[RMDB]
RNA sequence: GGGAACGACUCGAGUAGAGUCGAAAAGUUUUAGUUUCACCACAUCACGUUCACCUUUUGCUUUACAUGUAUCGCGAAAUGUAAACACUUAUUCAACCAAUUGAUGUCUUCCCGUUAACAAGGCCGAGACCGUACAGACAUUCGUGUCUGUACGGUCAAAAGAAACAACAACAACAAC
Reactivity to DMS in 0.01 (KOAc 150mM, MgCl2 10mM, bicine 150mM(pH8.5), 24C), signal-to-noise 2, nucleotides 027 to 126: g000u030u000u010u000a120g010u000u000u010c020a070c040c040a070c030a050u030c080a070c100g000u000u000c030a040c020c030u030u000u000u040g040c050u040u020u000a040c070a080u020g000u020a080u000c140g000c040g000a010a100a020u000g000u000a030a070a010c010a030c140u020u020a090u000u030c080a090a030c120c080a070a110u000u030g010a010u000g010u000c020u000u000c000c000c010g020u020u000a070a010c140a080a060g000g020c040c090g000a290
Reactivity to 2A3 in 0.01 (KOAc 150mM, MgCl2 10mM, bicine 150mM(pH8.5), 24C), signal-to-noise 3, nucleotides 027 to 126: g050u010u040u090u140a030g000u010u010u020c040a070c030c000a040c000a020u050c030a010c070g010u030u020c010a080c000c000u050u070u040u070g030c040u040u010u050a020c020a070u070g060u120a080u060c030g010c010g090a090a060a010u070g010u120a000a080a010c040a010c020u060u040a060u090u000c030a000a060c020c010a090a160u030u040g000a020u080g030u000c000u010u000c000c030c000g000u000u040a100a020c070a060a070g080g000c020c050g040a020
This 177-nucleotide RNA was probed chemically with DMS and 2A3. Reactivities are rounded to 0.1 and cut off at 0 and 3. Source: RMDB libraries RFM100 and RFMREP, as collected in RNAgym. The RNA was probed in 150 mM KOAc, 10 mM MgCl2 and 150 mM bicine (pH 8.5) at 24 C. 2A3 adducts were read by reverse transcription with SuperScript II with manganese.